[RMDB]
RNA sequence: GGGAACGACUCGAGUAGAGUCGAAAACAUCAGCUACACACUGCUUGACAUAUAUUGUUAGAAGCACCUCGCAUUUGUGGGUUCUCUUAAGCAAAAUACUUGCAUUAGGUCUCAGCUGGGGCUGUGCGCUACCUGUUUAGUUCGCUAAACAGGUAGCAAAAGAAACAACAACAACAAC
Reactivity to DMS in 0.01 (KOAc 150mM, MgCl2 10mM, bicine 150mM(pH8.5), 24C), signal-to-noise 2, nucleotides 027 to 126: c050a080u000c040a030g010c010u000a050c060a100c120a060c110u000g030c080u010u000g000a050c050a090u000a130u010a050u000u010g000u000u000a070g020a040a060g000c060a080c070c010u000c060g000c210a120u000u000u000g030u010g000g000g010u000u000c060u000c040u010u010a070a070g000c040a020a010a080a100u000a100c130u000u000g010c030a030u000u010a070g020g010u000c040u000c080a040g010c100u020g010g000g000g020c070u000g030u010g020c150
Reactivity to 2A3 in 0.01 (KOAc 150mM, MgCl2 10mM, bicine 150mM(pH8.5), 24C), signal-to-noise 2, nucleotides 027 to 126: c020a040u080c030a000g010c030u110a040c070a010c040a020c060u030g030c010u060u080g000a020c050a010u170a000u040a030u130u120g040u100u040a060g030a130a000g040c030a020c000c010u040c030g040c090a170u010u070u230g050u120g000g050g000u080u010c020u000c000u040u070a080a030g020c020a010a050a050a090u140a110c050u030u050g000c000a050u000u110a040g020g000u010c010u020c030a040g000c040u070g010g030g000g000c000u020g040u070g050c040
Chemical mapping of a 177-nucleotide RNA with DMS and 2A3. Conditions: 150 mM KOAc, 10 mM MgCl2 and 150 mM bicine (pH 8.5), 24 C. Source: RMDB library RFMREP, as collected in RNAgym.